[RMDB]
RNA sequence: GGGAACGACUCGAGUAGAGUCGAAAAGGGAACUAUUCCUCUCGAGAAUCGGCAAAUGGGGCCCCUCGCUCGUAUCUCCGAGAGGAGACGAGAAAGAGGAGGAUCUCCCUUUGCCAUCCGAGGGAACCAGUUAUAAGAUGUUCGCAUCUUAUAACUGAAAAGAAACAACAACAACAAC
Reactivity to 2A3 in 0.01 (KOAc 150mM, MgCl2 10mM, bicine 150mM(pH8.5), 24C), signal-to-noise 6, nucleotides 027 to 126: g040g010g010a050a030c040u060a160u100u050c040c020u100c000u000c020g300a300g040a220a090u160c130g020g000c000a010a020a060u160g000g000g020g010c000c000c000c000u000c000g030c000u000c000g050u090a160u020c000u000c010c000g040a040g010a010g050g000a000g000a000c010g000a000g000a040a210a030g010a010g020g020a110g030g010a020u020c040u030c010c000c000u000u010u010g000c000c000a000u000c000c000g000a000g000g010g000a000a020c020
Reactivity to DMS in 0.01 (KOAc 150mM, MgCl2 10mM, bicine 150mM(pH8.5), 24C), signal-to-noise 4, nucleotides 027 to 126: g010g020g010a120a110c150u000a230u000u000c020c000u010c010u000c010g010a180g010a060a040u010c190g010g000c000a000a010a010u010g020g010g000g010c030c010c000c010u000c010g010c000u010c000g000u000a130u010c000u000c000c000g000a240g010a270g010g000a000g010a010c000g000a010g010a030a060a140g010a010g010g000a120g010g010a130u000c040u000c000c000c020u000u000u000g000c000c000a020u000c010c000g000a030g000g000g000a030a060c300